The record gives the reactivity of an RNA of 177 nucleotides to 2A3 and DMS.
RNA sequence: GGGAACGACUCGAGUAGAGUCGAAAAGCGCGGAUUGAUCAUCAGACCAUUUGGAUUGUCCGUGGUGCUAACCACUGAACCGGGUGGACUGCAACUGCUGCUGGUGGCCGCCGCCAGUUCAUUGCAGCUCCAGAUCCGGAUUCGUCCGGAUCUGGAGAAAAGAAACAACAACAACAAC
Reactivity to 2A3 in 0.01 (KOAc 150mM, MgCl2 10mM, bicine 150mM(pH8.5), 24C), signal-to-noise 1, nucleotides 027 to 126: g090c060g000c060g020g030a190u240u180g020a080u120c070a000u060c020a050g140a140c030c040a050u140u010u120g110g020a090u060u080g030u070c020c030g000u040g000g050u000g010c060u110a090a100c020c000a030c030u050g010a030a040c020c010g010g000g010u050g010g020a020c020u000g000c060a020a010c090u020g020c030u030g000c020u010g030g030u000g060g030c060c030g070c000c010g000c000c000a000g000u120u110c020a020u040u060g000c010a020g050
Reactivity to DMS in 0.01 (KOAc 150mM, MgCl2 10mM, bicine 150mM(pH8.5), 24C), signal-to-noise 1, nucleotides 027 to 126: g010c070g050c060g000g010a080u020u020g030a060u000c070a130u010c110a090g000a120c020c050a100u000u020u000g010g000a170u020u010g010u000c040c050g040u000g000g020u000g000c220u000a080a140c040c000a060c100u010g010a070a070c050c020g000g040g030u000g010g000a120c000u000g020c040a010a010c210u000g010c190u020g000c000u000g010g030u000g010g000c080c060g000c030c010g000c000c020a020g030u000u000c020a030u020u000g000c020a020g020
Description: Source: RMDB library OK2TRN, as collected in RNAgym. The RNA was probed in 150 mM KOAc, 10 mM MgCl2 and 150 mM bicine (pH 8.5) at 24 C. Reactivities are given for positions 27 through 126. DMS adducts were read by reverse transcription with MarathonRT. The DMS profile rests on 1,049 reads.